[RMDB]
RNA sequence: GGGAACGACUCGAGUAGAGUCGAAAAGAGAAGAGACUGUCUCGCAGACUAGAAGUCUCUUCUUUUCUGCUUUGAGACUUCUUCUCCGUAGGACUCUUCGGCUCUUCGCGGGUACCCAGCAACCUGCUCCCACGCGGCGAUUGCAAAGGAUCCGGUUAUUUACGUUGAAGUUCGCUUCAACGUAAAUAAAAGAAACAACAACAACAAC
Reactivity to 2A3 in 0.01 (KOAc 150mM, MgCl2 10mM, bicine 150mM(pH8.5), 24C), signal-to-noise 3, nucleotides 027 to 156: g020a000g000a020a010g010a000g060a070c160u110g010u030c000u010c010g010c010a010g010a020c010u020a010g010a030a030g300u180c090u090c040u250u020c030u000u010u000u000c000u010g000c000u190u150u230g000a000g000a000c000u020u010c000u020u000c000u030c000c010g080u150a110g070g130a080c060u030c000u080u000c010g000g000c000u000c000u000u020c010g000c010g020g000g030u020a040c010c010c010a010g030c000a000a020c010c010u040g000c030u060c040c030c020a070c060g020c010g010g050c070g170a210u010u160g000c050a080a040a040g060g000a050u020c030c030g020g010u030u020